RNA sequence: GGGAACGACUCGAGUAGAGUCGAAAACGGAAGCAUUAAAACCAUUCGAGCUAGUCAAUGCGUGGCGUGUCUCUCCGCAGCGUGUUGGCGAAUGUAAAGAGAGACUAAGCAUGUAGUACCGAGGAUGAUAAGAGCAAUUCGUUCGCGAAUUGCUCAACAAUCCUUACAUGUUCGCAUGUAAGGAUUGAAAAGAAACAACAACAACAAC
Reactivity to 2A3 in 0.01 (KOAc 150mM, MgCl2 10mM, bicine 150mM(pH8.5), 24C), signal-to-noise 7, nucleotides 027 to 156: c050g030g030a040a010g020c040a040u070u170a110a060a020a080c040c020a050u070u080c060g020a030g020c020u030a020g010u010c000a000a010u020g010c010g020u050g170g000c000g010u030g000u000c000u000c000u000c010c000g000c010a020g000c010g000u020g010u010u010g020g010c010g000a010a000u080g030u120a010a030a010g000a000g000a000g000a000c000u020a050a010g010c020a030u080g030u090a030g020u030a070c040c060g010a040g070g010a040u100g020a020u120a220a130g000a010g000c000a000a000u000u000c010g020u030u070c160g010c000g100a000a000u000u010g000c000u000c000a000a000
Reactivity to DMS in 0.01 (KOAc 150mM, MgCl2 10mM, bicine 150mM(pH8.5), 24C), signal-to-noise 3, nucleotides 027 to 156: c060g020g000a060a040g030c050a080u010u000a060a070a100a110c040c020a140u000u010c040g010a090g010c020u000a100g030u000c010a030a010u000g010c020g040u000g030g040c020g000u000g000u000c020u000c010u010c050c010g030c010a110g030c010g020u010g030u000u000g020g000c020g000a080a000u010g000u010a030a020a080g020a040g010a030g000a030c010u010a070a120g000c060a050u000g010u010a100g020u000a070c080c030g040a090g020g000a110u000g010a100u010a060a140g010a030g010c000a020a030u000u000c010g020u000u010c270g020c000g020a020a010u010u000g020c000u000c000a000a060

An RNA of 207 nucleotides, treated with 2A3 and DMS and read out base by base. For 2A3 the reverse transcriptase was SuperScript II with manganese. The reactions ran in a buffer of 150 mM KOAc, 10 mM MgCl2 and 150 mM bicine (pH 8.5), at 24 C. It was measured as part of the RMDB library M2RFPK.